[RMDB]
Chemical mapping of a 177-nucleotide RNA with DMS and 2A3. Conditions: 150 mM KOAc, 10 mM MgCl2 and 150 mM bicine (pH 8.5), 24 C. It was measured as part of the RMDB library M2PK50.
RNA sequence: GGGAACGACUCGAGUAGAGUCGAAAAGAGUCCUAUUUCGAUAGGACUCAACUAAAAUCAGCGGAAAAUAAUUAGCUGGCGUUACCGCUGAACGCCAGCAUACUAGCCUCGUCUUCGGACGAGGCAAACAUACUUCAGACUUCGGUCUGAAGUAUGUAAAAGAAACAACAACAACAAC
Reactivity to DMS in 0.01 (KOAc 150mM, MgCl2 10mM, bicine 150mM(pH8.5), 24C), signal-to-noise 2, nucleotides 027 to 126: g000a000g010u000c000c010u000a000u000u000u010c150g010a030u000a010g000g020a010c000u000c000a040a060c080u010a050a070a070a120u000c020a010g000c010g000g020a160a030a040a020u000a000a040u030u010a130g000c000u000g010g000c000g000u000u000a070c060c000g000c000u000g000a010a030c000g010c000c000a010g030c030a050u010a020c160u000a080g000c000c000u000c000g020u010c010u000u020c250g000g010a000c010g020a010g000g020c000a000a010
Reactivity to 2A3 in 0.01 (KOAc 150mM, MgCl2 10mM, bicine 150mM(pH8.5), 24C), signal-to-noise 3, nucleotides 027 to 126: g010a000g000u000c000c000u000a010u020u080u050c150g070a010u010a000g010g030a000c000u010c000a000a000c020u060a020a020a020a090u020c000a000g050c020g300g100a160a040a000a030u160a020a090u120u190a060g000c010u000g000g000c000g000u010u020a130c010c000g000c010u000g000a000a000c010g000c010c000a000g000c010a010u040a020c080u080a040g000c000c010u000c000g010u000c010u030u060c250g070g000a000c000g000a000g010g000c000a000a010